The record gives the reactivity of an RNA of 177 nucleotides to DMS and 2A3.
RNA sequence: GGGAACGACUCGAGUAGAGUCGAAAACGAAAAACAGUGAGUGGACGGAAGAAAUCCCCUUCCCACCUCCCCACUGUCCACUCACUGUCUUCCUAAGAGGAAAUAUAAAUCGGGGGUGGGAAGGGGAGACGGAUGAUACUUUCGAGUAUCAUCCGUCAAAAGAAACAACAACAACAAC
Reactivity to DMS in 0.01 (KOAc 150mM, MgCl2 10mM, bicine 150mM(pH8.5), 24C), signal-to-noise 1, nucleotides 027 to 126: c110g050a010a080a070a120a130c080a010g030u030g000a060g030u000g020g000a060c050g020g030a070a030g000a090a130a060u030c000c010c000c000u040u000c000c000c000a020c010c000u010c030c000c130c070a010c040u000g100u000c000c000a030c000u000c000a010c000u030g010u000c020u010u000c000c020u050a070a120g000a110g000g000a050a040a100u020a100u020a090a130a120u060c070g000g000g000g050g000u000g000g010g000a010a000g000g050g000g000a070
Reactivity to 2A3 in 0.01 (KOAc 150mM, MgCl2 10mM, bicine 150mM(pH8.5), 24C), signal-to-noise 5, nucleotides 027 to 126: c070g080a000a070a000a000a000c020a000g010u000g010a000g010u010g000g010a000c010g030g060a020a030g060a060a140a090u100c000c000c000c010u010u000c000c000c000a000c000c000u040c040c050c030c030a060c070u060g020u000c000c000a000c010u010c000a000c000u000g010u000c010u010u010c010c010u050a120a020g080a080g130g220a040a160a010u300a060u120a070a140a040u210c110g010g010g000g000g000u000g000g000g000a000a000g000g000g000g000a000

Record summary:
Conditions: 150 mM KOAc, 10 mM MgCl2 and 150 mM bicine (pH 8.5), 24 C. The DMS profile rests on 1,710 reads.